[RMDB]
Chemical mapping of a 177-nucleotide RNA with 2A3. 2A3 adducts were read by reverse transcription with SuperScript II with manganese. The reactions ran in a buffer of 150 mM KOAc, 10 mM MgCl2 and 150 mM bicine (pH 8.5), at 24 C. 2A3 is a SHAPE reagent: it acylates the 2'-hydroxyl of flexible nucleotides of all four kinds.
RNA sequence: GGGAACGACUCGAGUAGAGUCGAAAAGCGCGAAGACUUGACGCGGGGCGUAUUUCUUCUUAUUUUUUUACGCCCCGGUAUAAAUAAUAAGAAGAAAUAUAAGAUGUCUUGUCGAAAGCGCGAAGAAGGGAAAUGAUAUCUUCGGAUAUCAUUUCCCAAAAGAAACAACAACAACAAC
Reactivity to 2A3 in 0.01 (KOAc 150mM, MgCl2 10mM, bicine 150mM(pH8.5), 24C), signal-to-noise 1, nucleotides 027 to 126: g010c000g010c020g050a080a070g020a010c000u000u000g000a010c000g010c050g080g030g060g000c090g000u010a050u010u050u020c000u000u000c010u030u030a100u170u040u020u020u000u040u000a010c000g020c010c000c010c000g000g000u030a010u010a000a060a000u110a020a000u040a020a000g010a050a000g000a000a080a000u100a020u040a080a130g060a110u180g000u020c000u000u000g000u000c000g050a290a020a010g040c040g000c000g020a000a020g130a040a080